[RMDB]
RNA sequence: GGGAACGACUCGAGUAGAGUCGAAAACGAGUGCAAUAAAGACGCGGUUGCCGAUCGGUAUGGAUGCCACCGUCACGGCUCAAUCACACAAGUGCCAACGAUAACGAGGCGCUCGCUAUUGCUGCGUAAAAGCGACGAUCGUUCGCGAUCGUCGCAACCUUUGAGGUUUGUUCGCAAACCUCAAAGGAAAAGAAACAACAACAACAAC
Reactivity to DMS in 0.01 (KOAc 150mM, MgCl2 10mM, bicine 150mM(pH8.5), 24C), signal-to-noise 1, nucleotides 027 to 156: c000g000a120g010u000g030c080a170a120u000a120a100a100g020a090c040g020c040g050g030u000u000g050c030c050g050a080u000c010g010g050u000a150u020g030g010a170u000g010c090c090a040c010c020g060u000c050a110c060g020g010c000u000c050a050a100u030c060a120c090a140c040a040a110g030u000g000c020c020a060a160c090g000a280u000a050a130c030g000a180g000g030c030g040c030u000c000g110c040u000a090u000u000g010c000u000g000c020g040u000a090a000a050a190g000c000g000a020c050g010a030u000c000g010u000u010c220g000c020g000a020u000c010g030u010c080g000c000a010a010
Reactivity to 2A3 in 0.01 (KOAc 150mM, MgCl2 10mM, bicine 150mM(pH8.5), 24C), signal-to-noise 4, nucleotides 027 to 156: c050g030a060g070u100g030c030a050a130u080a180a280a030g120a030c060g010c050g050g010u050u080g000c030c010g030a050u030c000g010g040u110a100u180g130g050a080u120g080c040c020a020c000c000g050u050c030a020c080g000g000c010u040c100a030a070u110c010a040c010a010c000a210a030g020u010g020c030c000a090a070c100g070a120u160a240a040c050g000a060g010g000c020g000c020u040c010g020c020u010a030u080u130g000c050u060g010c020g010u040a060a070a090a120g000c010g000a000c000g000a010u000c000g000u060u070c170g000c000g090a000u000c000g000u000c000g000c000a000a000